[RMDB]
RNA sequence: GGGAACGACUCGAGUAGAGUCGAAAACACGAUCAGUGCUGGGAAGUCUUCGUACAGCGCGUCGUACGCUGCCAGGGCGUUCUCGAUCUCGUCCAGAGACGGAGAUGCCUUGUAGUUGAACCGGAUCGGGAUGUCGUCCAGCUCGCUGGCGAUGUCAGCCACCUCUAUUUUUCGAAAUAGAGGUGGCAAAAGAAACAACAACAACAAC
Reactivity to 2A3 in 0.01 (KOAc 150mM, MgCl2 10mM, bicine 150mM(pH8.5), 24C), signal-to-noise 4, nucleotides 027 to 156: c070a000c000g030a020u090c070a040g030u020g020c000u030g000g010g120a140a140g130u090c100u150u130c100g060u130a070c010a010g010c000g000c000g070u040c010g000u020a050c070g000c020u020g030c020c030a020g020g020g010c030g080u110u030c020u000c010g240a300u000c010u000c000g260u170c160c170a070g000a010g000a010c030g060g010a030g000a020u020g000c000c000u000u000g000u000a020g000u010u200g070a050a040c050c000g030g030a040u090c060g040g010g000a000u030g020u020c000g030u050c020c030a010g010c030u090c120g040c020u000g000g000c000g000a010u010g020u010c020a000
Reactivity to DMS in 0.01 (KOAc 150mM, MgCl2 10mM, bicine 150mM(pH8.5), 24C), signal-to-noise 1, nucleotides 027 to 156: c040a070c040g010a080u000c000a110g020u000g010c050u020g020g040g010a060a150g000u000c070u000u000c040g020u040a040c030a020g020c030g030c000g010u000c140g010u000a080c010g010c010u010g000c010c070a090g030g020g000c000g030u000u000c030u000c020g020a100u050c020u000c020g000u000c170c140a180g000a060g000a020c040g000g020a080g020a040u010g030c020c000u000u000g040u020a030g030u000u000g000a120a100c000c030g000g000a210u000c020g020g000g000a060u010g000u000c000g000u000c010c010a040g060c050u010c150g020c010u000g000g010c030g000a040u010g000u000c010a160